Conditions: 150 mM KOAc, 10 mM MgCl2 and 150 mM bicine (pH 8.5), 24 C. Structure probing data (2A3 and DMS) for a 207-nucleotide construct. 2A3 adducts were read by reverse transcription with SuperScript II with manganese. Values cover nucleotides 27 to 156. DMS adducts were read by reverse transcription with MarathonRT.
RNA sequence: GGGAACGACUCGAGUAGAGUCGAAAAGCGAAUGUUGCCAUGAGACCGUAACUUUCGUAGUCAUUGAUAAAGGGGCAGGUCUCGCUCUUUUGUCAUUGCGGUUGCCUAGAGGCAUGGUCGUUUACCGAAAAGAGCUCAUUCUUCGGAAUGAGCUCAACAUUACGCAUCAGUUCGCUGAUGCGUAAUGAAAAGAAACAACAACAACAAC
Reactivity to 2A3 in 0.01 (KOAc 150mM, MgCl2 10mM, bicine 150mM(pH8.5), 24C), signal-to-noise 8, nucleotides 027 to 156: g020c010g010a030a020u050g010u050u030g030c030c040a100u120g060a060g030a170c040c030g010u020a020a030c020u040u080u070c080g010u030a050g100u090c050a070u020u040g000a010u020a010a010a010g000g010g010g000c030a030g050g220u090c100u080c090g000c000u010c010u000u000u000u020g010u010c010a020u010u070g010c020g040g010u030u060g020c000c020u120a120g030a130g080g000c030a020u070g010g010u010c010g000u020u010u050a260c020c010g010a070a060a010a050g000a000g000c000u000c000a000u000u000c000u020u070c190g070g000a000a000u000g000a000g000c000u000c010a000a000
Reactivity to DMS in 0.01 (KOAc 150mM, MgCl2 10mM, bicine 150mM(pH8.5), 24C), signal-to-noise 3, nucleotides 027 to 156: g000c010g020a060a050u000g010u000u000g010c010c030a160u000g000a110g030a060c050c030g030u000a070a050c030u000u000u000c050g040u010a070g010u010c090a130u000u000g010a060u000a000a030a020g000g000g020g020c000a150g030g000u000c080u000c060g020c010u000c010u000u000u000u000g020u010c010a050u010u010g010c040g020g030u000u000g010c010c060u000a100g010a200g010g000c040a060u010g000g000u000c020g010u000u010u000a140c020c020g000a040a080a090a190g010a040g040c000u010c000a020u000u010c010u000u010c270g040g000a010a000u010g010a010g020c000u000c000a010a040